[RMDB]
RNA sequence: GGGAACGACUCGAGUAGAGUCGAAAACGAGCCUCGUUCGCGAGGCUCGAAAGGCGGCGAAAGCUCCACUAAAUGUCGAAAGUGUAACGCCAAUCCCACACAAAAGGCUGCCGUUCGCGGCAGCCAAGUUCUUUUACUAGUUCGCUAGUAAAAGAACAAAAGAAACAACAACAACAAC
Reactivity to DMS in 0.01 (KOAc 150mM, MgCl2 10mM, bicine 150mM(pH8.5), 24C), signal-to-noise 2, nucleotides 027 to 126: c030g000a020g010c000c000u000c030g090u000u020c220g010c040g000a010g000g030c010u000c000g020a010a040a120g000g000c090g000g020c020g000a070a070a140g000c040u000c140c040a050c050u000a090a110a090u000g000u010c160g010a080a030a040g000u000g010u010a070a160c020g000c010c020a080a130u010c000c010c000a110c180a120c220a050a070a130a110g010g060c000u010g010c000c000g000u000u010c170g010c020g000g000c000a010g000c000c000a010a010
Reactivity to 2A3 in 0.01 (KOAc 150mM, MgCl2 10mM, bicine 150mM(pH8.5), 24C), signal-to-noise 2, nucleotides 027 to 126: c010g000a000g000c010c010u020c000g020u070u020c050g020c010g130a010g000g020c000u000c020g000a000a020a000g040g000c040g050g010c020g050a110a030a000g000c030u090c030c000a030c020u180a110a170a220u300g050u180c110g060a200a060a050g020u050g020u110a090a000c010g000c020c010a000a070u020c000c000c000a030c000a000c030a010a010a020a050g010g020c010u000g030c080c000g030u100u120c250g000c030g060g090c050a000g000c000c000a010a000